[RMDB]
RNA sequence: GGGAACGACUCGAGUAGAGUCGAAAAGGAACGUUGUUCGCAACGUUCCGUGCCGGAAACGGACAUGACGAUCCCGCGCAUGUCGGGAAACCGUAAACGCGAGCAUCAUGGUGUUCGCACCAUGAAAUUCAUUUACCGAAUUCGUUCGGUAAAUGAAAAAAGAAACAACAACAACAAC
Reactivity to DMS in 0.01 (KOAc 150mM, MgCl2 10mM, bicine 150mM(pH8.5), 24C), signal-to-noise 7, nucleotides 027 to 126: g000g010a010a000c000g020u000u000g000u000u010c180g020c000a070a010c010g010u000u000c000c000g010u000g010c040c020g000g000a080a100a140c020g000g010a070c050a050u010g010a070c080g010a100u000c010c010c000g020c030g000c150a230u000g010u000c010g010g000g000a050a040a080c120c010g000u000a030a100a110c120g010c020g000a070g020c190a150u000c000a020u000g000g010u010g020u000u000c150g020c020a010c010c010a010u000g000a040a080a110
Reactivity to 2A3 in 0.01 (KOAc 150mM, MgCl2 10mM, bicine 150mM(pH8.5), 24C), signal-to-noise 6, nucleotides 027 to 126: g010g000a000a000c000g000u010u020g030u070u080c150g020c070a010a000c000g000u000u010c000c000g000u040g020c010c020g020g030a090a080a010c040g040g020a030c030a070u100g070a060c040g030a060u040c000c020c000g000c000g000c030a150u160g060u130c010g020g030g000a070a040a010c050c000g010u050a060a090a050c070g020c030g030a020g040c030a060u040c000a000u020g010g000u010g020u060u060c200g000c050a010c000c000a010u010g020a060a020a010